[RMDB]
RNA sequence: GGGAACGACUCGAGUAGAGUCGAAAAAAUAGCGGGUCAAGGUACAACGCAGAGAGAUAGGCUCAUCCCAAGUUCUCUUCGGAGUACCAAGACUACGGUACAGAAGAGAUACCGACUCUUCAUAGAAUCUCAUUAAGUGAUUCGUCACUUAAUGAGAAAAAGAAACAACAACAACAAC
Reactivity to 2A3 in 0.01 (KOAc 150mM, MgCl2 10mM, bicine 150mM(pH8.5), 24C), signal-to-noise 3, nucleotides 027 to 126: a000a000u180a060g060c020g000g020g000u010c010a040a030g000g000u020a020c010a030a000c040g010c020a000g010a000g000a010g010a040u070a130g080g000c030u020c070a100u120c030c010c000a010a020g050u090u000c010u000c000u000u020c010g000g000a020g000u000a000c000c000a010a000g000a000c000u030a050c000g020g020u080a050c050a080g020a000a000g000a000g000a030u080a090c000c010g050a060c010u010c010u030u020c010a010u010a060g140a060a090
Reactivity to DMS in 0.01 (KOAc 150mM, MgCl2 10mM, bicine 150mM(pH8.5), 24C), signal-to-noise 6, nucleotides 027 to 126: a080a090u000a030g020c030g000g000g010u010c000a050a300g000g010u000a010c020a030a250c020g000c100a030g000a020g000a050g010a080u010a120g000g010c100u000c300a070u010c270c000c010a090a110g010u010u000c000u000c000u010u010c010g000g000a300g010u010a000c000c000a020a300g000a030c020u000a040c020g000g010u000a040c170a120g030a010a010g010a000g000a050u000a130c030c030g010a120c010u000c000u000u000c010a130u000a120g010a080a110
Chemical mapping of a 177-nucleotide RNA with 2A3 and DMS. 2A3 is a SHAPE reagent: it acylates the 2'-hydroxyl of flexible nucleotides of all four kinds. DMS adducts were read by reverse transcription with MarathonRT. It was measured as part of the RMDB library M2PK90.